[RMDB]
RNA sequence: GGGAACGACUCGAGUAGAGUCGAAAAUCUCUUAUGAGAAGGGCGUCGUGAACACAGUUAAGUGGCUCGUCUGUAGCUCCCGGAGGUGAGUACACCUCUACGUAUAUGGGGCGAUGAGGGGUCAAGAGCUAAUCGGCUACUUCGGUAGCCGAUUAGCAAAAGAAACAACAACAACAAC
Reactivity to DMS in 0.01 (KOAc 150mM, MgCl2 10mM, bicine 150mM(pH8.5), 24C), signal-to-noise 1, nucleotides 027 to 126: u000c000u000c040u000u030a110u020g000a000g000a000a010g000g040g070c040g010u000c000g010u000g010a090a060c040a000c130a110g000u010u040a080a010g000u000g010g010c000u000c000g060u010c050u000g000u000a190g000c000u000c000c010c070g000g000a000g040g000u000g010a300g010u010a120c040a000c020c000u000c000u010a030c210g070u080a090u070a110u080g020g030g000g010c030g000a150u010g000a100g000g000g000g000u010c000a020a090g000a150